Annotation:
Structure probing data (DMS and 2A3) for a 177-nucleotide construct. For 2A3, 1,463 sequencing reads were counted. For DMS the reverse transcriptase was MarathonRT. Values cover nucleotides 27 to 126. 2A3 adducts were read by reverse transcription with SuperScript II with manganese. The reactions ran in a buffer of 150 mM KOAc, 10 mM MgCl2 and 150 mM bicine (pH 8.5), at 24 C. High 2A3 reactivity points to a flexible backbone, as in loops and unpaired stretches.
RNA sequence: GGGAACGACUCGAGUAGAGUCGAAAAUUGGACGUCUGUCCUCCUUCGGAUGCCCAGGUCGGACCGCGAGGAGGUGGAGAUGCCAUGCCGACCCGAAGAGGAAAGAAGGACGCGAGACACGAACCUGCAGCUCUAAUAAGUUCGCUUAUUAGAGCUGAAAAGAAACAACAACAACAAC
Reactivity to DMS in 0.01 (KOAc 150mM, MgCl2 10mM, bicine 150mM(pH8.5), 24C), signal-to-noise 3, nucleotides 027 to 126: u000u000g010g010a090c020g010u000c030u000g020u000c010c010u000c030c010u010u000c030g000g000a090u000g030c030c010c020a050g000g020u010c100g010g010a180c030c060g020c150g010a040g000g010a020g000g030u000g020g000a070g010a080u000g000c020c000a020u010g020c050c020g010a070c020c010c040g010a070a070g000a090g010g000a050a070a070g000a070a080g000g010a070c100g010c050g010a080g000a090c060a080c050g010a040a130c070c020u000g010
Reactivity to 2A3 in 0.01 (KOAc 150mM, MgCl2 10mM, bicine 150mM(pH8.5), 24C), signal-to-noise 1, nucleotides 027 to 126: u060u050g020g000a040c020g000u040c030u070g250u070c010c000u010c010c000u040u070c010g050g030a090u190g100c040c020c010a050g090g130u070c040g020g000a030c000c000g060c080g060a030g010g020a010g050g000u040g040g010a060g020a020u110g000c000c010a030u060g000c010c000g050a060c000c030c010g010a110a030g030a050g010g060a100a060a000g060a050a010g060g010a010c050g010c030g050a050g000a020c020a020c020g030a070a060c000c000u080g030